[RMDB]
RNA sequence: GGGAACGACUCGAGUAGAGUCGAAAAGCAUCCUAUUGAGUGAGCCAAGGAUAAGCGUGGUCCCUGGCAGGGUGCAGGAUUCUAUCCUGAAAUACACCCCCUCCACUUUCUCCUAUUCCAGUCCACCUGUACUCCUAUCGUUCGCGAUAGGAGUACAAAAAGAAACAACAACAACAAC
Reactivity to 2A3 in 0.01 (KOAc 150mM, MgCl2 10mM, bicine 150mM(pH8.5), 24C), signal-to-noise 6, nucleotides 027 to 126: g030c010a040u050c010c000u070a110u050u280g070a090g020u100g070a030g010c000c000a010a020g010g000a040u030a090a090g050c030g080u040g030g030u040c030c010c000u010g010g000c040a010g010g000g000u010g000c010a020g000g020a030u300u140c070u170a090u040c010c010u010g040a050a050a010u150a020c010a020c000c010c000c000c010u030c010c000a030c000u040u050u010c030u000c010c020u050a080u070u010c020c020a010g020u000c020c010a040c020c020
Reactivity to DMS in 0.01 (KOAc 150mM, MgCl2 10mM, bicine 150mM(pH8.5), 24C), signal-to-noise 2, nucleotides 027 to 126: g030c050a110u010c000c000u000a120u000u020g010a070g000u010g000a110g070c030c020a070a080g000g000a020u000a030a080g010c120g030u000g000g000u020c040c020c020u000g010g000c100a060g000g010g030u000g000c010a040g000g000a040u000u060c230u030a100u020c000c010u000g000a040a030a040u010a270c060a070c020c000c010c040c000u010c000c040a050c060u000u010u000c000u010c030c050u000a100u000u020c010c040a020g000u010c070c010a070c090c100

Structure probing data (2A3 and DMS) for a 177-nucleotide construct. As a SHAPE reagent, 2A3 marks flexible, mostly unpaired nucleotides at the ribose 2'-OH. The RNA was probed in 150 mM KOAc, 10 mM MgCl2 and 150 mM bicine (pH 8.5) at 24 C. 2A3 adducts were read by reverse transcription with SuperScript II with manganese.